[RMDB]
RNA sequence: GGGAACGACUCGAGUAGAGUCGAAAAGGGAGCCAACUUCAAGGCGAGCAGAGUGAUCGACAGCCGCAAAAGCGUGAAACCCACCAUCAUUGAGGAAGGUGAUGGAAGAGUCAUCCUGGGGGAACCCCAGGGCCGGCUUAUUCGUAAGCCGGCCCUGAAAAGAAACAACAACAACAAC
Reactivity to DMS in 0.01 (KOAc 150mM, MgCl2 10mM, bicine 150mM(pH8.5), 24C), signal-to-noise 3, nucleotides 027 to 126: g000g000g000a230g020c070c000a140a080c050u030u000c100a160a130g020g000c020g000a150g030c090a070g000a080g040u000g000a070u000c030g030a090c140a080g000c010c010g080c090a070a040a100a020g040c020g000u000g000a040a140a070c030c040c040a120c030c010a020u000c020a020u000u000g010a150g000g000a090a090g000g000u000g000a030u000g000g000a080a030g040a070g000u000c050a100u000c000c030u000g000g000g010g000g010a100a080c030c020c010
Reactivity to 2A3 in 0.01 (KOAc 150mM, MgCl2 10mM, bicine 150mM(pH8.5), 24C), signal-to-noise 5, nucleotides 027 to 126: g060g000g000a040g030c010c010a050a050c070u110u110c110a110a030g060g000c020g020a020g010c020a020g060a070g040u140g040a090u050c020g050a020c030a030g000c010c030g000c030a110a090a020a000g050c050g030u050g060a080a050a090c000c000c000a000c000c010a010u030c000a010u040u280g110a110g120g050a130a050g050g010u010g010a010u020g000g040a060a040g030a050g080u020c020a040u020c010c020u040g000g010g000g000g040a060a080c000c000c000
Structure probing data (DMS and 2A3) for a 177-nucleotide construct. For DMS, 2,859 sequencing reads were counted. DMS adducts were read by reverse transcription with MarathonRT. The reactions ran in a buffer of 150 mM KOAc, 10 mM MgCl2 and 150 mM bicine (pH 8.5), at 24 C. Source: RMDB library OK1LIB, as collected in RNAgym. For 2A3, 3,414 sequencing reads were counted.